[RMDB]
RNA sequence: GGGAACGACUCGAGUAGAGUCGAAAAAGCUACUAGGGAGGCUGAGAUGGGAGGAUCAAAAAAACAUGAAAAUGUGUCAUGUGGCAGCUCAUGCCAGGCUUCACCAGCAUGCUUAUGGCAAGGUUUUGGGCCGGCCUCUUCAGCUUACAGGUGAGAACAUAUGGUACCGAUUCGUCGGUACCAUAUGAAAAGAAACAACAACAACAAC
Reactivity to 2A3 in 0.01 (KOAc 150mM, MgCl2 10mM, bicine 150mM(pH8.5), 24C), signal-to-noise 3, nucleotides 027 to 156: a000g020c030u060a040c020u090a100g050g010g000a000g020g000c020u010g030a050g020a110u080g010g040g000a020g000g030a060u130c150a020a090a020a010a010a000a010c080a010u070g060a060a070a100a070u170g100u020g030u100c040a030u050g000u030g040g040c010a010g000c020u010c040a030u070g000c010c010a040g070g010c030u090u050c030a040c100c010a020g030c050a050u110g030c020u150u140a070u110g020g000c030a010a100g020g050u040u090u140u100g040g000g000c020c000g050g040c020c000u010c070u050u030c010a000g020c000u000u050a060c050a030g070g010u030g040a050g030a040a030
Reactivity to DMS in 0.01 (KOAc 150mM, MgCl2 10mM, bicine 150mM(pH8.5), 24C), signal-to-noise 1, nucleotides 027 to 156: a100g000c050u000a050c020u000a070g000g000g020a050g040g020c050u010g000a040g010a120u000g010g010g030a110g020g020a080u010c020a000a000a040a070a050a100a030c000a040u020g000a060a070a060a090u000g000u000g030u000c020a060u020g050u000g000g090c030a090g010c080u010c100a120u010g020c020c010a160g070g000c060u000u010c010a040c050c030a110g010c000a090u010g020c050u020u000a110u000g040g030c000a060a090g000g010u000u010u020u020g020g020g000c040c020g020g020c010c010u000c060u000u010c070a020g020c010u010u000a090c060a080g030g040u000g000a120g000a070a210